[RMDB]
RNA sequence: GGGAACGACUCGAGUAGAGUCGAAAACGAUCAGUACGUUCGCGUACUGAUCGAAGCUACUGGAGACAGUAGCAAGUCUAAGACCUUGUUAGGCGGAAACAAGGAAAAAUGGAGGAAGGCCUUACCUCCAUACUUAGACAACCGCCAAAGGGCCAACGCUACCAGGAGUAUUCGUACUCCUGGUAGCAAAAGAAACAACAACAACAAC
Reactivity to 2A3 in 0.01 (KOAc 150mM, MgCl2 10mM, bicine 150mM(pH8.5), 24C), signal-to-noise 1, nucleotides 027 to 156: c010g020a010u000c000a000g020u000a000c000g000u010u120c200g000c000g110u020a000c000u010g000a000u000c020g000a000a020g000c000u010a000c000u010g000g030a030g000a030c000a000g000u000a000g000c010a010a030g000u000c000u000a010a040g010a190c000c000u020u020g000u010u060a150g090g120c110g030g090a040a010a000c000a000a000g050g000a030a110a100a020a020u060g000g010a010g020g000a070a130g000g000c000c000u020u230a080c010c010u020c000c000a010u000a020c000u000u000a000g000a010c020a060a060c110c060g080c050c040a020a010a020g000g000g010c010c010a020a010c060
Chemical mapping of a 207-nucleotide RNA with 2A3. Conditions: 150 mM KOAc, 10 mM MgCl2 and 150 mM bicine (pH 8.5), 24 C. 2A3 adducts were read by reverse transcription with SuperScript II with manganese. As a SHAPE reagent, 2A3 marks flexible, mostly unpaired nucleotides at the ribose 2'-OH. The data come from the RNA Mapping Database (RMDB), library OK3TST. Reactivities are given for positions 27 through 156.